The record gives the reactivity of an RNA of 207 nucleotides to DMS and 2A3.
The RNA was probed in 150 mM KOAc, 10 mM MgCl2 and 150 mM bicine (pH 8.5) at 24 C.
The DMS profile rests on 1,104 reads.
It was measured as part of the RMDB library OK3TST.
2A3 adducts were read by reverse transcription with SuperScript II with manganese.
The 2A3 profile rests on 846 reads.
RNA sequence: GGGAACGACUCGAGUAGAGUCGAAAAAUGCCGUUCAGAGUGUUCAUCGUCGAGAUGGCGAGAAAGACCAAAAUCAAACCCAACAAGAUCAACAAACUGGCCUCGGUCAUAUUUACCGGUUUCUAUUUGAGACAAUAUUUAGAGGCGGCGCCUAACAGCCACAUAAUUGAUUCGUCAAUUAUGUGGCAAAAGAAACAACAACAACAAC
Reactivity to DMS in 0.01 (KOAc 150mM, MgCl2 10mM, bicine 150mM(pH8.5), 24C), signal-to-noise 1, nucleotides 027 to 156: a110u030g000c030c060g040u050u020c080a300g020a080g000u010g020u000u000c000a050u000c020g160u000c020g000a160g010a080u000g000g030c050g020a050g010a140a140a150g050a100c050c090a050a060a060a110u010c000a120a090a200c010c020c010a070a220c090a140a150g010a080u010c060a010a100c060a030a080a130c030u010g070g000c020c020u000c080g020g020u010c080a130u000a010u010u000u010a090c070c010g060g000u010u010u000c030u000a130u000u000u000g010a230g020a080c020a110a170u020a010u000u020u000a170g010a030g000g000c010g010g000c050g020c100c030u030a030a070c050a260
Reactivity to 2A3 in 0.01 (KOAc 150mM, MgCl2 10mM, bicine 150mM(pH8.5), 24C), signal-to-noise 2, nucleotides 027 to 156: a000u040g000c000c020g000u020u090c050a020g040a050g050u070g060u060u040c040a080u060c070g000u030c030g000a050g020a230u180g060g040c010g000a040g030a000a080a020g020a030c010c090a030a020a080a080u100c050a130a040a050c020c030c000a020a030c060a030a070g080a120u150c010a000a040c010a060a070a120c010u030g050g020c000c040u040c110g050g000u030c010a010u040a090u190u140u070a040c010c030g050g000u020u080u060c040u030a150u080u050u110g030a040g000a010c030a060a100u010a050u150u140u120a090g000a010g020g000c050g030g030c010g020c000c050u200a040a040c020a050